[RMDB]
RNA sequence: GGGAACGACUCGAGUAGAGUCGAAAAGAUUCCUCGUUGUUGAGCGAGGUUUAAACAAAUCGACCACACAAACGUAGAGCCGACUACGGAUUUAUAAAUUAAGGCAUAAAGUGUGAUAAGGAGACAAAAAACGAUGUUGUGUUCGCACAACAUCGAACAAUCGCAAGAAGUUCGCUUCUUGCGAUUGAAAAGAAACAACAACAACAAC
Reactivity to 2A3 in 0.01 (KOAc 150mM, MgCl2 10mM, bicine 150mM(pH8.5), 24C), signal-to-noise 4, nucleotides 027 to 156: g070a130u200u100c000c000u000c000g000u000u010g010u020u020g000a000g000c000g010a000g010g000u040u110u050a030a040a010c080a010a000a000u010c000g000a010c000c010a010c010a010c000a010a210a000c010g000u000a000g000a000g010c000c010g060a020c010u010a000c010g020g010a030u080u300u050a160u180a130a040a010u170u130a000a000g000g010c010a010u220a040a090a040g000u000g000u000g010a010u030a020a030g180g020a060g020a050c130a070a130a030a050a040a010c030g010a000u010g000u000u010g000u000g020u050u060c160g030c050a000c000a010a000c000a000u000c000g010a010a000
Reactivity to DMS in 0.01 (KOAc 150mM, MgCl2 10mM, bicine 150mM(pH8.5), 24C), signal-to-noise 2, nucleotides 027 to 156: g040a300u000u020c000c010u000c030g000u000u010g000u030u010g020a160g000c060g020a040g000g020u000u000u000a030a060a090c140a110a110a170u010c020g030a010c010c010a050c000a180c040a100a130a160c010g000u000a040g020a190g000c000c020g000a090c000u010a030c030g010g010a200u010u000u000a050u000a010a020a110u000u000a060a050g010g000c050a290u000a030a080a090g000u010g020u030g030a100u010a070a080g040g000a160g010a080c090a010a040a110a060a100a140c030g000a010u000g000u000u030g020u000g010u000u020c300g020c000a040c000a000a000c000a000u000c000g020a020a080
Structure probing data (2A3 and DMS) for a 207-nucleotide construct. For 2A3 the reverse transcriptase was SuperScript II with manganese. For DMS the reverse transcriptase was MarathonRT. Conditions: 150 mM KOAc, 10 mM MgCl2 and 150 mM bicine (pH 8.5), 24 C. The 2A3 profile rests on 2,874 reads. It was measured as part of the RMDB library M2RFPK.